Chemical mapping of a 207-nucleotide RNA with DMS and 2A3. Source: RMDB library OK3TST, as collected in RNAgym. Reactivities are rounded to 0.1 and cut off at 0 and 3. Values cover nucleotides 27 to 156. For DMS the reverse transcriptase was MarathonRT. The reactions ran in a buffer of 150 mM KOAc, 10 mM MgCl2 and 150 mM bicine (pH 8.5), at 24 C. The 2A3 profile rests on 12,667 reads.
RNA sequence: GGGAACGACUCGAGUAGAGUCGAAAAACAACAGAUAGCUGGAACCAGCGUAGAAUUCUACGCAUAUCCAUAGCGAAUGGUACCUGUAAAGAAAAUAAUGAGCGAUGUACAAGUACCAACAGCGUUCAAUGCCAUGGUGAUGUCAAUCACAUAUGCACGUACUAUAGGCAUUCGUGCCUAUAGUACGAAAAGAAACAACAACAACAAC
Reactivity to DMS in 0.01 (KOAc 150mM, MgCl2 10mM, bicine 150mM(pH8.5), 24C), signal-to-noise 3, nucleotides 027 to 156: a100c040a100a120c070a080g010a140u010a060g020c020u000g000g010a080a100c130c100a150g010c000g000u000a030g000a270a170u010u000c010u000a010c010g040c010a200u000a120u000c090c040a090u000a110g010c010g000a140a150u000g020g010u000a010c020c020u000g030u000a070a060a070g000a100a060a070a110u010a100a150u000g000a070g040c030g000a110u000g020u000a040c010a030a060g000u000a030c020c000a040a150c050a080g020c040g020u010u010c060a070a110u000g020c060c050a070u000g000g040u010g000a090u020g020u010c180a080a080u010c080a050c030a090u000a060u000g010c030a230
Reactivity to 2A3 in 0.01 (KOAc 150mM, MgCl2 10mM, bicine 150mM(pH8.5), 24C), signal-to-noise 9, nucleotides 027 to 156: a000c040a020a010c020a040g120a130u140a050g030c030u020g030g010a090a130c060c050a050g000c000g000u000a000g030a150a300u300u100c010u010a000c000g000c010a010u040a040u050c020c010a040u100a030g020c020g050a070a050u040g000g000u020a010c000c010u010g010u050a040a090a060g170a050a120a020a040u260a030a100u150g050a030g070c060g030a030u080g010u050a010c010a040a000g000u000a020c010c000a020a030c040a040g040c010g050u070u070c040a070a060u070g020c030c040a020u060g000g010u010g010a020u020g110u180c090a100a030u010c000a020c010a040u130a020u080g020c030a010